The record gives the reactivity of an RNA of 177 nucleotides to DMS and 2A3. 2A3 adducts were read by reverse transcription with SuperScript II with manganese. Source: RMDB library M2PK50, as collected in RNAgym. For DMS the reverse transcriptase was MarathonRT. Values are in units of 0.01, from 0 to 300, in steps of 10. The RNA was probed in 150 mM KOAc, 10 mM MgCl2 and 150 mM bicine (pH 8.5) at 24 C.
RNA sequence: GGGAACGACUCGAGUAGAGUCGAAAACUUUUCAACUUCGGUUGAAAAGAACCUGCGCGCUGCUCGCAGUUAAGUCUAACUCCUGCUCUGAGUCAUCGGGCGUUAUAUAAUCAUUCGUGAUUAUAAAUAUAGCUACACUUUUCGAAGUGUAGCUAUAAAAAGAAACAACAACAACAAC
Reactivity to DMS in 0.01 (KOAc 150mM, MgCl2 10mM, bicine 150mM(pH8.5), 24C), signal-to-noise 2, nucleotides 027 to 126: c000u000u000u010u010c000a000a000c000u000u010c210g070g010u000u000g000a000a000a010a000g000a110a130c230c020u000g040c050g010c090g020c090u020g010c060u000c020g020c090a060g020u010u010a090a130g000u010c070u000a080a120c050u000c160c030u000g000c020u000c030u010g030a020g000u010c120a090u000c070g010g000g010c100g000u000u010a060u000a020u000a000a020u000c010a030u000u000c190g010u000g000a010u000u000a020u000a020a070a160
Reactivity to 2A3 in 0.01 (KOAc 150mM, MgCl2 10mM, bicine 150mM(pH8.5), 24C), signal-to-noise 1, nucleotides 027 to 126: c010u100u050u000u000c000a040a010c000u000u080c280g120g000u000u000g000a000a010a010a000g000a030a020c010c020u010g030c020g000c010g030c140u120g010c060u090c010g000c000a000g010u010u140a080a000g040u040c140u110a110a080c000u090c040c000u060g040c010u000c010u160g010a060g090u050c030a060u090c060g030g050g000c080g040u160u040a080u010a010u000a140a010u010c010a020u060u030c090g000u010g010a000u000u020a000u020a030a090a020